Structure probing data (DMS and 2A3) for a 177-nucleotide construct. For 2A3, 652 sequencing reads were counted. For DMS, 2,233 sequencing reads were counted. 2A3 adducts were read by reverse transcription with SuperScript II with manganese.
RNA sequence: GGGAACGACUCGAGUAGAGUCGAAAACAUUAUUUUGAACAUGGUGAGAUCAAUAAUGGUGUACUGAUGGCGGCAGCUGGAAAGUAUGGUAAUUAUCUUGGAGAGGUUAAUUUAACUUUUGAGGCACAACCCUCCUUCUCUUCGGAGAAGGAGGGUUAAAAGAAACAACAACAACAAC
Reactivity to DMS in 0.01 (KOAc 150mM, MgCl2 10mM, bicine 150mM(pH8.5), 24C), signal-to-noise 2, nucleotides 027 to 126: c020a040u020u010a050u000u000u030u040g080a080a030c110a090u000g010g050u050g000a100g040a040u010c020a110a060u030a000a050u040g020g030u020g020u040a060c110u060g060a110u000g010g010c070g000g000c070a070g000c100u010g000g030a100a060a060g000u000a060u000g010g030u030a020a000u000u020a070u000c030u040u000g000g040a050g030a120g010g010u000u020a040a080u010u000u020a080a040c070u010u010u010u010g010a160g000g010c180a030c190
Reactivity to 2A3 in 0.01 (KOAc 150mM, MgCl2 10mM, bicine 150mM(pH8.5), 24C), signal-to-noise 2, nucleotides 027 to 126: c000a050u010u040a050u070u060u020u230g020a120a040c020a030u210g040g120u060g090a090g000a030u040c070a040a030u070a070a060u080g000g000u050g000u080a070c010u060g130a170u190g110g000c000g000g030c020a000g020c060u020g000g010a170a060a000g000u050a050u040g000g000u090a010a080u050u050a220u040c070u010u060g000g030a040g030a030g020g000u060u060a050a050u090u160u030a000a050c010u130u010u090u040g090a120g000g000c000a030c020